[RMDB]
RNA sequence: GGGAACGACUCGAGUAGAGUCGAAAAAACUUCAGCCUUCUCAACUUUAGCCCAUCUUCAUCAGUGGCAAUCAUCCUUAGCAGUUCAUGCAUUCAUUCAUGUAUUUAACAUACAUUUACUGCGCACCUGCCAGUGCACGUGCUGUGAUCAGCACUGGGCCGAGUUCAUGAUUCGUCAUGAACUCGGCAAAAGAAACAACAACAACAAC
Reactivity to 2A3 in 0.01 (KOAc 150mM, MgCl2 10mM, bicine 150mM(pH8.5), 24C), signal-to-noise 1, nucleotides 027 to 156: a000a000c060u100u100c000a000g010c000c000u030u010c000u010c050a030a120c010u080u110u050a050g000c020c000c050a000u080c110u030u020c030a140u010c010a000g000u080g000g000c050a000a100u010c020a080u000c010c010u080u130a050g000c000a010g000u040u150c000a000u130g080c010a020u100u100c010a030u140u010c000a030u060g080u030a010u040u110u220a180a000c040a080u050a010c000a000u040u000u100a020c000u070g000c000g040c080a070c030c000u050g000c000c000a010g000u050g000c010a000c170g000u020g010c020u010g050u200g080a060u180c050a100g000c000a000c000u000g000g010